[RMDB]
RNA sequence: GGGAACGACUCGAGUAGAGUCGAAAAACGAGCACCGCGGUUCGCCGCACUAUCUGAACUACCGGGCACAGGUCGGUGAAUUGCUGACCCGGCCCGUCGCGGUGACUGUGCUCGCGCCGCUCGACGAAGUUCAGGACAUUUUCGAAUGUCCUGAACUAAAAGAAACAACAACAACAAC
Reactivity to 2A3 in 0.01 (KOAc 150mM, MgCl2 10mM, bicine 150mM(pH8.5), 24C), signal-to-noise 4, nucleotides 027 to 126: a000c000g010a000g020c010a030c050c100g050c090g080g060u120u060c060g040c040c020g100c020a030c050u130a100u190c130u120g050a050a070c040u050a060c130c020g000g000g000c140a110c020a300g000g000u030c030g010g020u060g140a300a280u290u300g000c020u010g000a010c000c010c010g000g000c000c000c000g000u000c040g020c000g030g030u000g020a000c040u080g020u020g000c000u000c010g020c000g010c000c020g040c050u090c030g110a100c060g050a090
Reactivity to DMS in 0.01 (KOAc 150mM, MgCl2 10mM, bicine 150mM(pH8.5), 24C), signal-to-noise 3, nucleotides 027 to 126: a080c030g000a050g040c010a030c060c300g020c080g000g010u010u000c070g020c010c010g040c020a130c190u000a050u000c180u030g010a130a120c160u010a150c210c000g010g000g000c020a110c040a050g000g000u000c010g020g010u000g000a110a100u010u010g020c010u010g000a020c000c000c040g010g000c000c020c010g020u010c070g010c010g000g010u000g010a070c060u000g000u000g030c010u000c000g000c070g030c030c050g010c070u000c090g000a090c120g010a130
An RNA of 177 nucleotides, treated with 2A3 and DMS and read out base by base. 2A3 adducts were read by reverse transcription with SuperScript II with manganese. DMS adducts were read by reverse transcription with MarathonRT. The reactions ran in a buffer of 150 mM KOAc, 10 mM MgCl2 and 150 mM bicine (pH 8.5), at 24 C.